[RMDB]
RNA sequence: GGGAACGACUCGAGUAGAGUCGAAAAGAAUUGGUAUGUAAGCUAUUUCUUCCAGUAGCUGCGUCAUAACAUCAAGGUUAUGCAUACUGAGCCGAAGCUCAGCUUCGGUCCUCCAAGGAAGACCAAAUACAGCUCAGCCCGUUCGCGGGCUGAGCAAGGAUUAAAUAUCCUUCGGGAUAUUUAAUCCAAAAGAAACAACAACAACAAC
Reactivity to 2A3 in 0.01 (KOAc 150mM, MgCl2 10mM, bicine 150mM(pH8.5), 24C), signal-to-noise 1, nucleotides 027 to 156: g070a010a070u010u020g000g000u000a000u000g000u000a010a000g010c010u000a010u010u170u050c010u010u000c000c020a010g000u000a000g000c000u000g000c000g000u000c000a010u000a000a010c000a020u300c160a120a000g300g000u000u000a000u000g010c000a000u000a000c010u000g000a000g010c000c000g040a000a000g000c010u060c300a050g020c000u010u000c000g000g000u000c000c000u030c060c070a030a040g000g010a000a000g000a010c020c050a040a060a000u130a120c070a020g010c000u000c000a000g000c010c000c000g020u080u070c170g020c010g020g000g000c000u000g000a000g000c000a000a000
The record gives the reactivity of an RNA of 207 nucleotides to 2A3.
The data come from the RNA Mapping Database (RMDB), library M2RFPK.
The RNA was probed in 150 mM KOAc, 10 mM MgCl2 and 150 mM bicine (pH 8.5) at 24 C.